The record gives the reactivity of an RNA of 177 nucleotides to 2A3 and DMS. It was measured as part of the RMDB library OK2TST. The reactions ran in a buffer of 150 mM KOAc, 10 mM MgCl2 and 150 mM bicine (pH 8.5), at 24 C. The DMS profile rests on 2,997 reads.
[RMDB]
RNA sequence: GGGAACGACUCGAGUAGAGUCGAAAAGGUCAGAGCAGGGCUGACUGCCAUAACUAACAUUUAGGACAGGGAUAUAUGUGUGAUGAACAUUCUGAGAUUCCCAGGAGUUAGGGCAGGGACUCACACAUGGAUAAACCGUAUUCGUACGGUUUAUCCAAAAAGAAACAACAACAACAAC
Reactivity to 2A3 in 0.01 (KOAc 150mM, MgCl2 10mM, bicine 150mM(pH8.5), 24C), signal-to-noise 2, nucleotides 027 to 126: g050g000u020c010a030g050a010g090c050a060g010g000g080c000u030g060a060c010u020g000c010c000a100u020a020a010c060u040a070a040c020a150u090u170u250a100g000g040a060c090a030g040g030g000a020u060a020u000a040u150g010u000g000u010g040a040u020g040a050a030c020a160u080u020c070u030g100a070g020a160u040u060c020c000c000a020g060g030a030g000u100u140a040g000g000g090c020a050g030g010g050a020c000u010c010a040c000a010c000a000
Reactivity to DMS in 0.01 (KOAc 150mM, MgCl2 10mM, bicine 150mM(pH8.5), 24C), signal-to-noise 4, nucleotides 027 to 126: g020g010u000c020a030g020a110g020c070a110g000g000g000c030u000g000a080c040u000g010c030c020a070u000a060a080c080u000a050a110c130a130u000u010u000a110g010g000a080c100a090g010g000g010a090u000a070u010a050u000g000u010g010u010g010a050u010g020a120a140c050a060u000u000c050u000g010a120g020a240u000u000c000c010c010a170g000g000a060g010u010u000a060g010g030g020c070a050g010g000g000a130c080u000c030a050c040a030c070a090